[RMDB]
RNA sequence: GGGAACGACUCGAGUAGAGUCGAAAAGAGUAUAGCUUCGGCUAUACUCAAAACACUACAUGCUGCGCUCUAGGUGUGUAGUGACAGUAAGCGCGCAAAUAAAAACGACAGGGUUCGCCCUGUCGAACGGUAAUUGAUUCUUCGGAAUCAAUUACCGAAAAGAAACAACAACAACAAC
Reactivity to DMS in 0.01 (KOAc 150mM, MgCl2 10mM, bicine 150mM(pH8.5), 24C), signal-to-noise 1, nucleotides 027 to 126: g000a020g030u000a010u010a000g000c000u020u040c300g010g010c040u000a000u000a000c000u020c000a050a080a090a210c030a000c000u010a000c000a040u000g000c010u060g000c050g040c020u000c010u010a080g020g000u000g000u000g030u000a030g020u000g000a050c140a120g030u000a060a050g030c060g020c040g000c150a070a080a180u010a040a080a090a080a100c000g000a000c000a010g000g000g010u000u000c300g000c020c000c000u030g000u000c000g010a000a020
Reactivity to 2A3 in 0.01 (KOAc 150mM, MgCl2 10mM, bicine 150mM(pH8.5), 24C), signal-to-noise 2, nucleotides 027 to 126: g000a000g010u000a000u010a020g000c000u040u040c250g020g000c000u000a010u000a000c000u000c000a000a000a000a000c010a000c010u020a000c000a000u020g000c030u040g030c050g030c020u000c060u110a060g060g020u030g000u000g010u020a030g000u000g030a020c020a010g180u190a130a020g050c020g000c020g000c080a030a120a050u140a040a110a020a020a010c020g000a000c000a010g020g000g050u070u080c140g040c020c000c000u000g000u000c000g000a030a000